[RMDB]
RNA sequence: GGGAACGACUCGAGUAGAGUCGAAAAGCUCCUCUAUUUCCGACCGAACAUUCGGAUAAGCUGGUGGAGCAGUUUAUGAAAUAUGUCAGGGAAUUCGAGGCCCUUAGGGGCAUGCUUGCGAUAUGGGCCGCAUACCUAUCUUCGGAUAGGUAUGCGGAAAAGAAACAACAACAACAAC
Reactivity to 2A3 in 0.01 (KOAc 150mM, MgCl2 10mM, bicine 150mM(pH8.5), 24C), signal-to-noise 2, nucleotides 027 to 126: g000c060u000c030c000u030c040u050a090u000u010u000c010c010g040a040c000c000g010a090a160c060a100u100u120c020g040g040a000u020a040a010g020c020u010g040g050u140g290g030a080g000c000a000g000u050u030u040a040u000g050a010a100a030u160a060u170g070u060c060a030g020g020g050a020a100u120u100c040g080a040g030g020c000c000c000u040u020a160g020g000g000g030c000a050u080g020c020u070u110g070c050g070a110u070a050u090g040g040g050
Reactivity to DMS in 0.01 (KOAc 150mM, MgCl2 10mM, bicine 150mM(pH8.5), 24C), signal-to-noise 1, nucleotides 027 to 126: g000c000u020c010c000u000c060u000a080u000u000u000c000c040g000a200c120c100g000a220a200c240a180u000u000c180g000g000a020u040a060a020g020c000u000g000g000u010g000g020a000g000c000a020g000u030u000u010a000u000g020a000a050a150u000a010u000g010u040c070a130g050g000g010a060a120u000u020c150g000a130g000g000c040c010c020u000u100a060g000g000g080g040c210a040u000g000c010u000u010g000c020g000a100u000a100u000g000g000g040